[RMDB]
RNA sequence: GGGAACGACUCGAGUAGAGUCGAAAAGCCAGAGUGAGAGUCUUACUGCACCCAUUGCACCGCAGGUAGCCGUGGGGGAGCUUGUACUCCUUGUUGGGGAUGAGCUUUGGUCUAGCCCCUUAAUUACAUUAGACAAAGGGUUCGCCCUUUGUCUAAUAAAAGAAACAACAACAACAAC
Reactivity to 2A3 in 0.01 (KOAc 150mM, MgCl2 10mM, bicine 150mM(pH8.5), 24C), signal-to-noise 3, nucleotides 027 to 126: g040c010c010a010g010a010g000u050g020a200g030a040g090u030c010u050u090a190c020u100g030c050a080c000c000c000a000u000u040g000c010a040c050c050g170c190a130g040g000u030a050g000c000c010g010u020g010g000g020g000g010a010g000c020u060u080g040u130a160c020u010c010c010u070u180g150u100u140g070g000g000g010a010u020g000a010g000c000u030u000u030g030g000u020c000u040a080g030c000c020c000c020u080u080a110a040u120u110a070c050
Reactivity to DMS in 0.01 (KOAc 150mM, MgCl2 10mM, bicine 150mM(pH8.5), 24C), signal-to-noise 5, nucleotides 027 to 126: g000c020c000a040g010a040g020u000g000a120g020a150g010u000c020u010u010a080c030u000g010c050a300c030c010c010a050u000u000g010c020a070c010c020g010c190a070g010g020u000a070g030c020c050g010u000g010g020g000g000g000a030g000c020u000u010g010u010a100c010u000c010c030u000u000g020u000u000g000g000g000g000a080u000g010a180g000c020u010u010u000g010g010u000c050u010a170g000c060c010c000c190u000u000a050a080u010u010a090c180